[RMDB]
RNA sequence: GGGAACGACUCGAGUAGAGUCGAAAAAGUUUAGAUUUCGAUCUAAACUAGACCACUAAGAGGAUGUCGAGUGACUACGACGCAUCUAGUAGAAUGCGCCCAGCUGUGAGCAGUUCGCUGCUCACAAGUCCGACCCUAAUUUCGAUUAGGGUCGGACAAAAGAAACAACAACAACAAC
Reactivity to 2A3 in 0.01 (KOAc 150mM, MgCl2 10mM, bicine 150mM(pH8.5), 24C), signal-to-noise 2, nucleotides 027 to 126: a000g000u020u000u000a010g000a010u080u010u090c270g030a000u000c020u000a000a000a000c000u000a010g030a060c010c010a030c050u060a080a040g030a030g250g010a160u060g020u060c000g000a020g050u200g040a120c070u080a050c100g030a010c020g000c000a040u000c000u030a050g020u020a030g120a160a100u130g030c000g000c060c020c000a070g000c130u100g000u010g010a000g010c010a000g010u030u080c160g000c080u010g000c000u000c010a000c000a010a010
Reactivity to DMS in 0.01 (KOAc 150mM, MgCl2 10mM, bicine 150mM(pH8.5), 24C), signal-to-noise 1, nucleotides 027 to 126: a050g010u000u000u000a000g000a020u010u010u020c240g000a010u000c000u000a000a020a000c000u000a090g010a090c060c050a090c080u010a030a100g000a080g000g020a090u030g000u000c000g020a240g000u020g010a110c100u030a100c060g000a040c070g010c080a060u000c030u000a090g010u020a070g010a120a080u000g000c060g010c000c000c060a150g000c040u030g030u000g000a020g010c000a030g040u010u010c280g030c000u000g000c000u000c000a000c030a030a060